[RMDB]
RNA sequence: GGGAACGACUCGAGUAGAGUCGAAAAAAAGAUAUGGACGCAUGGGAGAUUGGUAGUGGCGAAGAACUCGCUCGGAAACGAGCGAGGGAGCCACUGAGAGAUCGAAGAACAUGCGUCCUAAGUCAAACCUCAUAUAAUUCUUCGGAAUUAUAUGAGGAAAAGAAACAACAACAACAAC
Reactivity to 2A3 in 0.01 (KOAc 150mM, MgCl2 10mM, bicine 150mM(pH8.5), 24C), signal-to-noise 3, nucleotides 027 to 126: a000a000a010g080a050u110a090u160g000g000a000c020g000c000a010u010g000g050g000a110g020a050u030u070g130g070u270a030g010u000g000g040c020g140a300a030g010a060a040c000u000c010g010c000u000c000g000g040a070a080a050c000g000a000g020c010g010a000g040g000g000a020g010c000c000a000c000u010g020a090g000a000g000a040u010c010g100a300a030g030a060a010c000a000u000g000c000g000u000c000c000u000a020a010g020u020c020a030a060a140
Reactivity to DMS in 0.01 (KOAc 150mM, MgCl2 10mM, bicine 150mM(pH8.5), 24C), signal-to-noise 5, nucleotides 027 to 126: a070a090a100g020a060u010a300u000g010g000a020c000g030c000a000u000g010g020g020a120g000a010u000u000g020g040u000a020g030u000g000g020c000g010a100a150g010a080a210c020u000c000g010c000u000c000g010g000a090a100a250c010g010a020g040c000g010a010g010g000g010a110g020c000c000a000c020u000g010a080g030a300g000a010u000c010g000a130a150g000a110a190c010a000u000g000c010g020u000c000c000u000a000a050g010u000c050a100a090a170